Annotation: An RNA of 177 nucleotides, treated with 2A3 and DMS and read out base by base. The 2A3 profile rests on 3,138 reads. The data come from the RNA Mapping Database (RMDB), library OK2TST. High 2A3 reactivity points to a flexible backbone, as in loops and unpaired stretches. DMS adducts were read by reverse transcription with MarathonRT.
RNA sequence: GGGAACGACUCGAGUAGAGUCGAAAAUCAACGACGGGACCGCGCUCGUGCUGUUCGCCGUCACCGUGGCGGUCGCGGAAGGUGCCGCUGGGAUCGGCCCGGCCGCGCUGGUCGGCCGGUUCGUCGUAUCCCGUUAUCUGUUCGCAGAUAACGGGAUAAAAGAAACAACAACAACAAC
Reactivity to 2A3 in 0.01 (KOAc 150mM, MgCl2 10mM, bicine 150mM(pH8.5), 24C), signal-to-noise 2, nucleotides 027 to 126: u060c010a020a010c010g030a010c030g030g010g090a010c010c010g050c040g020c090u110c160g150u140g050c030u030g060u180u160c040g000c030c010g020u010c030a050c040c120g110u160g020g010c020g000g010u070c000g000c030g030g040a030a040g080g040u100g030c000c010g010c090u150g200g060g040a160u110c000g000g020c030c010c020g030g000c020c010g000c000g030c100u090g060g020u000c000g020g000c000c000g000g030u040u020c010g000u010c010g010u040
Reactivity to DMS in 0.01 (KOAc 150mM, MgCl2 10mM, bicine 150mM(pH8.5), 24C), signal-to-noise 2, nucleotides 027 to 126: u020c080a200a120c030g000a040c010g030g020g010a030c010c020g030c180g020c030u000c090g040u020g010c000u010g000u010u000c130g000c000c000g000u000c040a130c150c170g020u010g030g010c000g000g010u000c040g020c030g000g000a070a020g000g020u010g010c010c020g020c110u000g010g000g010a160u000c000g010g020c030c010c010g010g000c000c000g030c030g000c260u000g010g000u000c030g010g020c010c000g000g000u000u000c020g000u010c000g010u000